Structure probing data (2A3 and DMS) for a 177-nucleotide construct.
The DMS profile rests on 1,264 reads.
For 2A3 the reverse transcriptase was SuperScript II with manganese.
Conditions: 150 mM KOAc, 10 mM MgCl2 and 150 mM bicine (pH 8.5), 24 C.
[RMDB]
RNA sequence: GGGAACGACUCGAGUAGAGUCGAAAAGAUAUGGAGUAGGGCUGAACUACCCUCGCUGAACUCGGAAACGAGAUACGAAUAAGAGGGCAGCACUACUCCUAAGUCAAAACUCCGGUUCGCCGGAGAACUAUGGGGGAAGGUUCGCCUUCCCCCAUAGAAAAGAAACAACAACAACAAC
Reactivity to 2A3 in 0.01 (KOAc 150mM, MgCl2 10mM, bicine 150mM(pH8.5), 24C), signal-to-noise 1, nucleotides 027 to 126: g060a000u040a040u100g010g000a020g020u000a000g000g010g000c000u000g020a020a090c060u130a110c220c010c000u040c070g000c140u100g090a140a060c000u000c000g040g050a070a030a010c030g000a000g000a030u250a170c040g060a110a180u300a300a110g020a030g000g060g000c010a010g030c050a020c040u010a000c000u000c000c000u010a000a000g000u000c000a030a000a030a090c010u010c020c000g000g050u010u020c220g070c060c010g010g020a020g010a040a060
Reactivity to DMS in 0.01 (KOAc 150mM, MgCl2 10mM, bicine 150mM(pH8.5), 24C), signal-to-noise 2, nucleotides 027 to 126: g000a070u010a300u000g000g000a010g040u000a000g000g010g020c010u000g000a100a040c120u020a300c020c020c000u000c000g010c180u020g020a120a140c010u010c010g010g010a120a090a110c000g020a010g000a070u000a070c090g000a140a130u040a110a100g010a000g020g000g010c010a010g010c020a030c000u000a010c000u010c000c000u000a000a040g000u020c030a070a040a080a100c000u020c010c000g000g010u010u020c180g000c000c010g010g030a000g000a030a110